About this RNA:
This 177-nucleotide RNA was probed chemically with DMS and 2A3. The data come from the RNA Mapping Database (RMDB), library OK2TRN.
[RMDB]
RNA sequence: GGGAACGACUCGAGUAGAGUCGAAAAUGAGGGUCUCGCCGCAUACACUUUGAGCCCGCGUCCGAUCAUUCAUGCUGUGGCCCCUGACUACAGGGUUGAGCAGAACCCCAAGAGGCUGGAGGCGGCACAUGAGAAGGGGAUUCGUCCCCUUCUCAUGAAAAGAAACAACAACAACAAC
Reactivity to DMS in 0.01 (KOAc 150mM, MgCl2 10mM, bicine 150mM(pH8.5), 24C), signal-to-noise 4, nucleotides 027 to 126: u000g020a090g000g010g000u000c030u000c070g030c040c040g010c050a060u010a090c130a100c080u000u010u020g010a110g000c050c010c030g010c100g000u000c030c050g000a060u010c070a090u010u010c060a080u010g010c030u000g010u000g020g020c190c010c000c020u020g010a130c190u000a110c070a080g010g000g020u000u000g010a150g010c040a070g000a040a080c020c000c000c050a100a120g010a070g020g010c030u010g000g000a120g000g000c030g010g000c030a230
Reactivity to 2A3 in 0.01 (KOAc 150mM, MgCl2 10mM, bicine 150mM(pH8.5), 24C), signal-to-noise 1, nucleotides 027 to 126: u080g010a080g030g030g030u020c030u020c050g050c020c000g080c080a050u160a200c070a060c180u130u070u180g050a020g000c000c020c000g030c000g110u000c040c000g000a090u030c010a050u100u020c020a020u070g020c020u030g050u100g120g040c030c020c000c010u060g060a150c060u120a110c050a010g000g000g020u020u070g040a020g010c000a010g040a050a060c000c000c000c030a040a030g050a060g050g000c020u040g040g020a040g060g000c000g000g000c010a030
The DMS profile rests on 3,642 reads. For DMS the reverse transcriptase was MarathonRT.